[RMDB]
RNA sequence: GGGAACGACUCGAGUAGAGUCGAAAAUCAACAAGAUACGAAAACCCCUUCCAUAUCAACAUCAUCACCACCCUUUUUGCGCCUUCCCUUCCCCGCAAAAAAUAAAAAUCUCCAACAAACUCAACCAAGAUAACAGAAGGUUCGCCUUCUGUUAUCUAAAAGAAACAACAACAACAAC
Reactivity to DMS in 0.01 (KOAc 150mM, MgCl2 10mM, bicine 150mM(pH8.5), 24C), signal-to-noise 3, nucleotides 027 to 126: u040c060a080a100c110a040a070g030a060u030a040c100g000a060a070a050a120c040c000c000c040u000u000c030c040a080u000a030u020c070a020a060c100a030u010c010a050u000c050a070c080c030a090c010c000c020u020u000u000u010u010g010c050g000c040c050u000u020c010c000c000u010u000c010c000c000c030g000c070a020a010a030a070a030a060u030a020a010a050a050a070u000c030u000c020c050a050a070c110a100a080a140c030u010c030a060a050c110c090a060
Reactivity to 2A3 in 0.01 (KOAc 150mM, MgCl2 10mM, bicine 150mM(pH8.5), 24C), signal-to-noise 5, nucleotides 027 to 126: u080c010a000a130c010a040a080g030a090u140a100c060g040a020a010a040a080c010c000c010c000u040u060c050c020a040u060a030u160c040a050a050c010a080u080c000a010u030c010a010c040c000a030c010c010c030u000u060u020u050u070g020c010g000c000c000u020u030c000c010c000u000u020c010c010c000c010g030c030a050a070a010a030a030a020u240a040a080a030a020a030u040c040u030c050c010a030a040c030a050a110a050c060u070c070a020a050c060c020a050
Chemical mapping of a 177-nucleotide RNA with DMS and 2A3. For 2A3, 4,360 sequencing reads were counted. The reactions ran in a buffer of 150 mM KOAc, 10 mM MgCl2 and 150 mM bicine (pH 8.5), at 24 C. It was measured as part of the RMDB libraries RFM100 and RFMREP. For 2A3 the reverse transcriptase was SuperScript II with manganese.